[RMDB]
RNA sequence: GGGAACGACUCGAGUAGAGUCGAAAAGAGAUGUUGAGGCUUGUAUGGUUCAGGUUACCUGCGGUAGCAUGACUCUUAAUGGUCUUUGGCUUGACAACACAGUCUGGUGCCCACGACACGUAAUGUGGCGUGUGGUAUGCUUCGGCAUACCACACGCAAAAGAAACAACAACAACAAC
Reactivity to DMS in 0.01 (KOAc 150mM, MgCl2 10mM, bicine 150mM(pH8.5), 24C), signal-to-noise 2, nucleotides 027 to 126: g010a100g000a080u000g030u000u000g010a060g010g000c020u000u010g010u010a070u010g010g000u000u000c050a060g010g000u000u000a060c070c010u000g020c150g010g010u000a050g010c040a040u000g000a060c020u000c080u000u030a120a140u000g000g000u000c030u000u000u000g010g010c060u000u000g000a080c120a080a070c110a090c080a060g020u000c050u000g010g010u010g010c030c000c020a100c120g010a170c030a020c050g020u040a080a050u010g000u000g010
Reactivity to 2A3 in 0.01 (KOAc 150mM, MgCl2 10mM, bicine 150mM(pH8.5), 24C), signal-to-noise 2, nucleotides 027 to 126: g060a010g040a040u050g040u080u100g020a050g010g030c000u000u030g070u120a050u120g040g030u060u070c040a020g080g000u030u040a010c010c030u070g060c070g120g050u040a000g000c000a000u050g030a040c000u000c000u080u150a060a010u140g040g020u010c000u020u020u060g000g030c010u040u000g010a020c020a100a010c020a030c030a050g020u000c020u050g030g010u070g010c000c050c000a010c030g040a000c000a000c010g090u200a190a140u190g020u010g120

Description
Structure probing data (DMS and 2A3) for a 177-nucleotide construct. The RNA was probed in 150 mM KOAc, 10 mM MgCl2 and 150 mM bicine (pH 8.5) at 24 C.